RNA sequence: GGGAACGACUCGAGUAGAGUCGAAAACGCCACUGGUUUACCGGUUGUCCGGCAGGGCAUCGCCGGGCAGCUACGCGCCACGCGGUUAAAGGCUGAAAGCAUCUAAGCCUGAAACCGCCCCCGAAAACUACGUUUGUACAUUCGUGUACAAACGUAGAAAAGAAACAACAACAACAAC
Reactivity to 2A3 in 0.01 (KOAc 150mM, MgCl2 10mM, bicine 150mM(pH8.5), 24C), signal-to-noise 8, nucleotides 027 to 126: c070g060c010c010a070c060u060g020g050u050u090u140a070c030c040g000g000u030u010g000u000c000c000g030g010c040a130g070g110g060c080a110u120c050g000c000c000g000g010g000c000a000g000c000u070a070c050g020c000g000c020c000a060c080g020c000g000g010u010u010a060a020a010g000g000c000u010g050a090a060a050g130c020a020u060c040u100a030a010g000c000c000u000g010a080a050a000c000c000g020c000c000c000c000c000g050a080a070a020a020
Reactivity to DMS in 0.01 (KOAc 150mM, MgCl2 10mM, bicine 150mM(pH8.5), 24C), signal-to-noise 4, nucleotides 027 to 126: c100g000c040c040a060c140u010g010g030u000u010u010a090c130c060g010g010u000u000g020u000c000c000g000g010c050a140g020g030g000c080a070u030c040g000c010c000g050g020g000c020a010g000c010u010a030c150g010c250g010c020c010a080c240g030c000g000g010u000u000a030a170a030g010g020c000u000g000a120a100a150g030c170a040u020c070u010a180a070g000c010c010u000g000a140a030a000c010c000g000c010c010c000c020c030g000a070a050a090a210

Chemical mapping of a 177-nucleotide RNA with 2A3 and DMS. 2A3 adducts were read by reverse transcription with SuperScript II with manganese. Conditions: 150 mM KOAc, 10 mM MgCl2 and 150 mM bicine (pH 8.5), 24 C.